An RNA of 207 nucleotides, treated with 2A3 and DMS and read out base by base.
DMS (dimethyl sulfate) methylates the pairing face of unpaired adenines and cytosines.
It was measured as part of the RMDB library RNAMAK.
The RNA was probed in 150 mM KOAc, 10 mM MgCl2 and 150 mM bicine (pH 8.5) at 24 C.

RNA sequence: GGGAACGACUCGAGUAGAGUCGAAAACUGGAUUCGUCCAGAAGUUCGAUAUGGACGUAGAUGGCUGUAUGGCUACCCACCGGUUCUCGGAAACGAGAACCGAGGCCAUACUGUACGCCAUACUACGUCCUAAGUCUGAGGUGGGCUUCGGCCCAAAUAUGUAGCAUAGCUUCGGCUAUGCUACAUAAAAAGAAACAACAACAACAAC
Reactivity to 2A3 in 0.01 (KOAc 150mM, MgCl2 10mM, bicine 150mM(pH8.5), 24C), signal-to-noise 2, nucleotides 027 to 156: c000u000g010g000a000u060u060c200g030u040c030c000a030g030a080a010g190u210u200c060g020a000u000a010u150g000g000a000c010g010u000a020g000a000u000g010g010c020u000g000u000a010u010g000g040c080u200a140c010c030c010a060c000c000g000g020u010u010c000u000c010g040g000a070a080a070c030g000a020g000a000a000c000c000g000a000g000g030c000c000a000u000a020c000u010g060u090a030c120g000c000c000a020u060a200c000u000a000c020g010u020c020c000u000a000a000g010u000c090u210g080a040g010g130u070g060g030g000c000u040u090c170g200g000c020c010c010a050a000a060
Reactivity to DMS in 0.01 (KOAc 150mM, MgCl2 10mM, bicine 150mM(pH8.5), 24C), signal-to-noise 1, nucleotides 027 to 156: c000u000g000g020a050u020u000c230g020u010c010c000a010g000a130a120g030u010u000c050g020a020u000a050u010g000g010a030c010g020u000a010g020a050u000g010g020c000u000g080u000a000u000g010g000c000u000a030c010c010c000a300c140c000g000g000u000u010c000u000c000g010g010a030a030a070c000g050a030g010a010a000c010c000g000a010g010g010c020c010a030u000a020c010u020g090u000a080c190g010c000c000a010u000a040c000u000a030c000g030u020c000c030u020a000a060g010u000c020u010g000a100g020g010u000g010g010g040c050u000u010c130g050g040c000c000c000a010a040a160

For 2A3 the reverse transcriptase was SuperScript II with manganese.